[RMDB]
RNA sequence: GGGAACGACUCGAGUAGAGUCGAAAACACCAUUGACUAUCAUGUGAAAGAGUGUGGAGAUGGUCACUACUGCUUCAAAGUAUCAAUGUUAGGAAGUGGUGCUGUUACGGUAAAAAGUAACCAUCACAAACGACGGAGUGUUCGCACUCCGUCGUUUAAAAGAAACAACAACAACAAC
Reactivity to DMS in 0.01 (KOAc 150mM, MgCl2 10mM, bicine 150mM(pH8.5), 24C), signal-to-noise 1, nucleotides 027 to 126: c060a070c030c000a070u000u000g050a300c010u010a050u000c020a000u000g000u020g000a020a000a000g000a120g000u000g010u000g000g000a040g000a140u030g000g000u000c060a000c190u010a070c000u000g010c100u030u020c060a030a050a090g020u000a080u020c080a050a040u040g000u000u010a040g020g000a140a090g040u000g000g000u000g010c050u000g030u000u010a010c000g070g000u070a040a070a210a080a240g000u000a050a020c000c050a020u030c080a010c100
Reactivity to 2A3 in 0.01 (KOAc 150mM, MgCl2 10mM, bicine 150mM(pH8.5), 24C), signal-to-noise 2, nucleotides 027 to 126: c040a000c000c000a030u030u000g060a140c020u060a040u120c000a000u080g100u120g210a170a000a030g020a000g020u060g000u020g090g000a060g090a280u160g000g290u150c050a000c040u300a060c000u030g120c030u030u000c080a040a090a020g070u050a020u230c030a030a300u000g000u070u070a030g000g000a020a060g000u000g020g020u000g000c130u090g000u000u000a090c000g060g120u180a030a030a020a030a030g000u020a000a000c020c000a040u000c000a000c030